[RMDB]
RNA sequence: GGGAACGACUCGAGUAGAGUCGAAAAAGCCAUUCUUUCCCUUUUUGCUUCCAAACUCCUCAACUGGGAACCUUCAUAUGUGCAGUAUUUAUAUUGGAUCAUACUGGUGAUUAUAAAAGUUCCUAGGCUUUUACAAUAUGUUCGCAUAUUGUAAAAGAAAAGAAACAACAACAACAAC
Reactivity to 2A3 in 0.01 (KOAc 150mM, MgCl2 10mM, bicine 150mM(pH8.5), 24C), signal-to-noise 3, nucleotides 027 to 126: a000g010c010c010a050u080u040c020u030u040u050c000c000c000u020u010u000u050u060g010c010u040u000c010c010a080a090a100c030u020c030c010u050c040a070a070c020u010g020g020g000a000a010c000c010u050u040c020a020u020a030u110g130u110g110c000a010g020u010a020u030u140u060a220u030a110u160u210g110g010a050u090c010a010u030a030c000u010g130g020u090g120a020u050u120a050u040a040a060a000a010g000u010u010c000c000u000a020g020g010
Reactivity to DMS in 0.01 (KOAc 150mM, MgCl2 10mM, bicine 150mM(pH8.5), 24C), signal-to-noise 4, nucleotides 027 to 126: a090g000c050c030a060u000u000c050u000u000u010c020c000c000u010u000u000u000u010g010c050u010u000c030c020a080a110a160c120u000c020c020u000c110a090a150c030u010g010g000g000a020a020c020c030u000u000c080a020u000a020u000g010u000g010c010a030g000u000a010u000u000u000a090u020a220u050u000g020g010a160u000c190a030u000a020c020u000g030g030u000g010a100u000u000a020u000a030a020a050a070g000u000u000c010c000u000a030g020g010
An RNA of 177 nucleotides, treated with 2A3 and DMS and read out base by base. Reactivities are given for positions 27 through 126. For 2A3 the reverse transcriptase was SuperScript II with manganese. The RNA was probed in 150 mM KOAc, 10 mM MgCl2 and 150 mM bicine (pH 8.5) at 24 C. For DMS the reverse transcriptase was MarathonRT.